[RMDB]
RNA sequence: GGGAACGACUCGAGUAGAGUCGAAAAGGUCUACGCAGGGAAUACUAAACCGGUCAAGCGACUGUUGAUCAACGACAAUACCGAUGCGGCGGUAAAAAAAGCGCUGUCGCAGCUUAAGGAUAACCGCAUCGGGGCUAAUAUUCGUAUUAGCCCCGAUAAAAGAAACAACAACAACAAC
Reactivity to 2A3 in 0.01 (KOAc 150mM, MgCl2 10mM, bicine 150mM(pH8.5), 24C), signal-to-noise 3, nucleotides 027 to 126: g020g000u050c020u030a020c060g020c080a040g000g030g030a100a150u070a140c010u130a060a060a100c010c030g000g040u070c040a070a020g040c040g060a050c070u040g070u120u050g060a110u080c020a060a040c040g040a020c020a050a120u050a130c000c010g000a010u010g010c000g000g000c000g010g020u110a060a030a020a000a020a090a020g090c070g000c040u060g060u100c050g010c020a010g000c000u080u070a090a020g100g030a050u080a200a040c000c000g010c010
Reactivity to DMS in 0.01 (KOAc 150mM, MgCl2 10mM, bicine 150mM(pH8.5), 24C), signal-to-noise 3, nucleotides 027 to 126: g020g010u000c030u010a070c120g010c040a100g010g020g000a140a050u020a070c090u040a040a110a100c060c010g020g000u020c110a090a070g000c040g010a070c030u000g020u040u040g000a120u020c140a060a160c110g000a070c090a070a130u040a020c010c010g010a070u000g000c000g000g020c010g000g010u030a010a000a070a070a050a100a050g000c020g000c070u030g020u050c100g020c010a140g020c040u010u000a060a080g000g000a040u020a070a070c020c030g000c040
Source: RMDB library OK1LIB, as collected in RNAgym. The record gives the reactivity of an RNA of 177 nucleotides to 2A3 and DMS. For 2A3 the reverse transcriptase was SuperScript II with manganese. The reactions ran in a buffer of 150 mM KOAc, 10 mM MgCl2 and 150 mM bicine (pH 8.5), at 24 C. The 2A3 profile rests on 1,981 reads.